An RNA of 207 nucleotides, treated with 2A3 and DMS and read out base by base.
The RNA was probed in 150 mM KOAc, 10 mM MgCl2 and 150 mM bicine (pH 8.5) at 24 C.
Values cover nucleotides 27 to 156.
RNA sequence: GGGAACGACUCGAGUAGAGUCGAAAAGUAUUGAUCUUCAGGCUUUUGGAAGAUUCCAGGCUACCACAGUAGCUGCAGCCCUCCUCUUAAUGUGGCCAGAAUUUAUUUCAAGAAGAGGAAAGACCACUUCUAUCAUCCAUCUUUGGAUGUGUUCUGGACCUACUGGGAGAUUCGUCUCCCAGUAGGUAAAAGAAACAACAACAACAAC
Reactivity to 2A3 in 0.01 (KOAc 150mM, MgCl2 10mM, bicine 150mM(pH8.5), 24C), signal-to-noise 3, nucleotides 027 to 156: g080u070a130u160u230g040a040u070c030u050u050c060a070g120g000c090u090u100u300u300g050g000a010a040g030a040u140u070c080c020a030g010g020c010u010a030c000c080a110c050a120g020u030a010g010c030u030g030c040a040g040c010c010c000u010c010c000u050c010u070u160a130a050u190g010u050g070g020c020c010a010g010a010a010u110u180u110a060u030u250u090c060a080a070g010a020a010g010a030g070g020a070a060a030g070a030c020c010a050c050u070u080c050u030a110u050c010a000u030c000c000a040u060c170u200u250u100g000g000a000u000g030u020g000u000u010c020u020g040g000
Reactivity to DMS in 0.01 (KOAc 150mM, MgCl2 10mM, bicine 150mM(pH8.5), 24C), signal-to-noise 1, nucleotides 027 to 156: g020u000a090u010u000g020a090u000c000u030u000c040a150g030g040c030u000u010u000u000g020g020a050a100g000a160u000u000c030c040a300g020g000c030u000a030c020c100a070c060a100g000u010a010g000c010u020g000c080a120g000c000c030c000u000c010c010u000c040u000u000a070a080u000g020u000g010g010c040c020a110g000a040a100u000u010u000a100u030u000u000c050a110a080g010a050a060g000a090g020g000a070a040a020g010a070c020c020a100c090u010u000c080u000a170u000c000a020u000c000c000a010u000c210u000u010u000g010g000a010u000g000u000g010u010u000c000u010g000g010